[RMDB]
RNA sequence: GGGAACGACUCGAGUAGAGUCGAAAACGCACAACGCUGGGCGAAGGUGGUAAAGACAUGUAGGUUACUGAAGCGCGCACGGUAACUACAACAGCUUUACGUAACAUCCUUCGCCUGUGCUGAAGCGCGCACGGCAACCGAAAGGUGCGGGGGGGUCCCCAUAUAUACUCUUCGGAGUAUAUAUGGGAAAAGAAACAACAACAACAAC
Reactivity to 2A3 in 0.01 (KOAc 150mM, MgCl2 10mM, bicine 150mM(pH8.5), 24C), signal-to-noise 3, nucleotides 027 to 156: c030g040c010a050c020a070a120c070g020c050u100g000g000g000c000g010a000a000g010g020u040g000g010u000a020a010a000g040a070c070a110u190g050u160a030g070g110u030u010a010c000u020g060a230a060g010c010g000c010g010c000a030c040g010g000u020a010a000c010u040a040c070a160a040c020a070g050c010u000u000u010a000c000g020u040a040a010c040a170u160c000c000u000u020c010g010c000c000u000g010u010g000c000u040g020a070a020g000c010g000c000g000c010a010c030g050g000c040a100a160c010c040g090a180a080a040g030g000u000g030c020g000g000g000g010g000g000g010u080c020
Reactivity to DMS in 0.01 (KOAc 150mM, MgCl2 10mM, bicine 150mM(pH8.5), 24C), signal-to-noise 1, nucleotides 027 to 156: c040g000c080a100c030a110a130c040g000c010u000g030g000g010c000g010a010a020g030g020u000g000g010u010a010a020a030g000a020c080a200u030g020u020a060g030g020u010u000a000c000u000g010a070a070g000c020g080c030g050c020a300c030g000g000u000a030a050c000u010a050c020a070a100c040a140g030c000u000u000u010a020c010g030u000a020a090c080a030u000c010c000u000u000c000g000c000c000u010g020u000g000c030u010g020a080a090g020c010g010c010g010c000a250c050g010g000c060a070a260c030c020g010a110a040a180g000g030u000g000c030g000g000g000g020g060g050g010u000c080